[RMDB]
RNA sequence: GGGAACGACUCGAGUAGAGUCGAAAAAAAAAGGAAGUAUCGCCUAAUGGUAGGGCAGCAGCUUGGAAAGCUGUGGGCGGCAACGUCUUGUGGGAUCGAUUCCCUCUACUUCCGCCAAAUAAAAAAACCUAAUUAGAAUGUUCGCAUUCUAAUUAGGAAAAGAAACAACAACAACAAC
Reactivity to 2A3 in 0.01 (KOAc 150mM, MgCl2 10mM, bicine 150mM(pH8.5), 24C), signal-to-noise 2, nucleotides 027 to 126: a000a000a000a080a000g040g000a030a000g010u050a040u140c050g000c010c010u070a110a050u210g250g020u090a060g010g020g000c000a000g010c000a000g000c010u070u160g120g110a260a060a010g000c000u000g000u040g000g000g000c000g000g030c040a070a000c020g010u000c010u060u090g010u000g010g000g000a010u090c090g060a070u140u040c010c010c020u010c000u010a000c010u000u020c000c000g000c000c010a050a090a020u210a040a080a010a010a000a000a030
Reactivity to DMS in 0.01 (KOAc 150mM, MgCl2 10mM, bicine 150mM(pH8.5), 24C), signal-to-noise 4, nucleotides 027 to 126: a030a040a040a100a090g000g000a030a000g010u000a010u010c070g010c000c000u000a050a070u010g020g010u010a030g050g000g010c010a300g000c010a010g000c020u000u000g010g000a160a090a050g020c000u000g010u010g000g000g010c000g000g000c300a060a070c010g020u000c020u000u010g000u000g010g000g000a040u000c090g000a300u000u000c000c010c000u000c020u000a020c010u000u000c000c010g010c040c060a040a070a080u030a010a010a070a050a040a060a090
The record gives the reactivity of an RNA of 177 nucleotides to 2A3 and DMS. The data come from the RNA Mapping Database (RMDB), library M2PK90. Conditions: 150 mM KOAc, 10 mM MgCl2 and 150 mM bicine (pH 8.5), 24 C. DMS adducts were read by reverse transcription with MarathonRT. For 2A3 the reverse transcriptase was SuperScript II with manganese.